[RMDB]
This 177-nucleotide RNA was probed chemically with DMS and 2A3. The data come from the RNA Mapping Database (RMDB), library RFMREP.

RNA sequence: GGGAACGACUCGAGUAGAGUCGAAAAGUUAGGGUUGGUGUCUUUCAACACCCUCCCGUGACCUACGUGUAGGGGUGAAAGGCCCAUCGAACCGGGCAACAGCUGGUUCCAACCGAAACAUGUCGAAUCUUAUGUUGAAGUUCGCUUCAACAUAAGAAAAAGAAACAACAACAACAAC
Reactivity to DMS in 0.01 (KOAc 150mM, MgCl2 10mM, bicine 150mM(pH8.5), 24C), signal-to-noise 6, nucleotides 027 to 126: g000u000u000a280g000g010g000u000u010g000g010u010g020u000c010u000u000u000c040a050a060c070a190c000c000c000u000c060c150c000g000u010g010a150c280c160u010a030c010g000u010g010u000a020g020g000g000g010u000g000a020a020a020g010g000c010c010c020a040u000c070g000a020a010c000c010g010g000g020c050a140a130c300a160g010c000u010g000g000u000u000c000c130a060a110c010c010g000a120a080a050c070a080u000g010u000c070g010a130a130
Reactivity to 2A3 in 0.01 (KOAc 150mM, MgCl2 10mM, bicine 150mM(pH8.5), 24C), signal-to-noise 4, nucleotides 027 to 126: g030u040u040a030g030g030g040u010u010g030g000u160g010u100c010u000u030u000c020a080a110c050a300c030c000c000u020c000c030c000g000u040g110a300c020c080u150a000c010g060u120g040u150a010g000g000g020g000u020g000a010a020a000g020g000c000c000c000a010u040c030g000a000a000c020c000g050g050g000c070a230a140c030a230g090c010u030g000g010u000u000c030c020a040a040c000c010g030a040a070a020c060a090u180g080u140c030g030a040a050
Conditions: 150 mM KOAc, 10 mM MgCl2 and 150 mM bicine (pH 8.5), 24 C.